[RMDB]
RNA sequence: GGGAACGACUCGAGUAGAGUCGAAAAGAUAUGGACUUGAACUACAUCGCUAAGCACGAGGAUCUCGGAAACGAGGGAGUGCGAAGCGAUGCAAGUCCUAAGUCAAAGAGCUACUUCGGUAGCUCAACUAUGUAACAAACUUCGGUUUGUUACAUAGAAAAGAAACAACAACAACAAC
Reactivity to 2A3 in 0.01 (KOAc 150mM, MgCl2 10mM, bicine 150mM(pH8.5), 24C), signal-to-noise 8, nucleotides 027 to 126: g040a020u080a060u160g010g000a000c000u010u010g000a060a030c060u140a040c280a000u000c000g000c010u030a040a020g000c000a010c010g080a250g030g030a020u010c000u000c000g050g030a100a070a040c000g000a010g000g010g010a030g000u000g000c000g010a010a000g010c000g000a000u000g000c000a000a000g000u000c000c000u010a100a010g040u020c050a110a070a120g000a000g010c000u010a000c000u050u120c300g110g000u000a000g010c000u000c000a000a000
Reactivity to DMS in 0.01 (KOAc 150mM, MgCl2 10mM, bicine 150mM(pH8.5), 24C), signal-to-noise 8, nucleotides 027 to 126: g000a060u000a300u010g010g010a010c000u000u000g000a070a030c070u010a270c010a010u000c000g010c000u000a020a300g010c000a010c000g010a090g010g000a040u010c000u000c000g010g000a070a080a160c000g000a010g000g000g000a030g030u000g010c000g010a140a030g000c000g000a000u000g000c010a000a000g010u000c000c000u000a020a070g010u000c030a090a130a130g010a010g000c000u000a000c000u000u020c190g020g000u000a000g010c000u000c000a020a100

Overview: Structure probing data (2A3 and DMS) for a 177-nucleotide construct. The data come from the RNA Mapping Database (RMDB), library TTRDEL. Reactivities are rounded to 0.1 and cut off at 0 and 3. 2A3 is a SHAPE reagent: it acylates the 2'-hydroxyl of flexible nucleotides of all four kinds. For 2A3 the reverse transcriptase was SuperScript II with manganese. The reactions ran in a buffer of 150 mM KOAc, 10 mM MgCl2 and 150 mM bicine (pH 8.5), at 24 C.